[RMDB]
RNA sequence: GGGAACGACUCGAGUAGAGUCGAAAAAAGCGAGGUACCUGGUGCCCCUCGGGUAAUCCCUGAUGAUUGGGAGCCGAAGGUGUGGGACCAGAUAAAGGACCUCGAGCCGCCGCGCGGUGCGCGAAUCAACGGUGAGAGACUUCGGUCUCUCACCGUUAAAAGAAACAACAACAACAAC
Reactivity to DMS in 0.01 (KOAc 150mM, MgCl2 10mM, bicine 150mM(pH8.5), 24C), signal-to-noise 2, nucleotides 027 to 126: a150a100g000c000g000a030g000g000u010a020c020c020u010g000g020u000g010c000c030c000c000u010c000g000g000g000u050a150a120u020c010c000c000u060g010a170u070g020a110u050u000g000g020g000a080g000c000c000g000a030a060g030g010u030g000u070g030g010g000a030c050c000a040g000a170u020a030a110a100g020g010a150c020c000u000c010g010a060g020c000c030g010c150c020g000c030g010c060g030g020u050g020c030g030c000g000a170a110u020c080
Reactivity to 2A3 in 0.01 (KOAc 150mM, MgCl2 10mM, bicine 150mM(pH8.5), 24C), signal-to-noise 2, nucleotides 027 to 126: a010a000g170c030g000a020g000g000u070a120c000c000u000g000g000u150g100c000c000c000c000u000c000g000g000g000u000a000a140u030c000c000c000u090g100a280u100g100a060u050u290g030g030g000a000g060c000c000g010a060a070g160g040u290g090u300g010g000g000a000c000c000a000g000a040u110a030a030a000g080g000a030c000c000u000c000g000a050g000c000c040g000c000c080g000c000g000c090g140g170u210g000c000g000c000g000a060a050u200c030